This 207-nucleotide RNA was probed chemically with DMS and 2A3. The reactions ran in a buffer of 150 mM KOAc, 10 mM MgCl2 and 150 mM bicine (pH 8.5), at 24 C. The 2A3 profile rests on 3,272 reads. The data come from the RNA Mapping Database (RMDB), library ARCHII.

RNA sequence: GGGAACGACUCGAGUAGAGUCGAAAAUGGCGUGUCGUGGUUGAUCAGCUGGCCACGUAAAAAGCCGAUCAAAAUUUAACUGCUGAACCGCAGUACUCCCUCGCGGCUUAAGUGCCGAGAGCCGUUCUGGCAGCUUCGCCUGAGAGGUGCUAGUCCGCUUAUAACAUCCGUUCGCGGAUGUUAUAAGAAAAGAAACAACAACAACAAC
Reactivity to DMS in 0.01 (KOAc 150mM, MgCl2 10mM, bicine 150mM(pH8.5), 24C), signal-to-noise 2, nucleotides 027 to 156: u010g020g020c020g020u010g010u000c030g050u010g000g060u000u000g020a090u000c050a060g010c090u000g000g000c040c030a050c020g010u010a010a040a060a110a050g030c010c010g010a090u010c060a070a080a090a120u000u010u000a080a060c030u000g010c010u000g020a060a080c060c060g050c030a100g020u000a060c060u000c010c020c010u000c040g000c010g020g020c000u000u000a070a160g030u000g030c000c020g000a080g000a030g000c030c030g020u000u000c060u000g030g000c030a050g020c040u010u000c080g020c040c040u000g010a150g010a170g000g010u000g000c040u000a120g000u000c030c060g010
Reactivity to 2A3 in 0.01 (KOAc 150mM, MgCl2 10mM, bicine 150mM(pH8.5), 24C), signal-to-noise 5, nucleotides 027 to 156: u120g000g000c030g010u080g030u080c000g010u010g020g020u030u020g030a190u080c040a020g060c050u060g010g000c000c000a010c010g010u050a070a070a050a080a020g010c010c000g000a040u060c060a010a130a080a080u120u270u180a100a030c030u020g000c000u100g080a100a050c070c060g000c020a000g010u050a090c040u060c010c010c000u020c040g010c010g020g020c000u090u090a120a050g090u070g070c000c010g040a040g020a010g050c050c050g050u100u030c020u040g010g000c010a030g070c010u060u100c040g030c010c050u060g020a040g000a020g080g020u020g020c010u020a000g050u030c040c010g000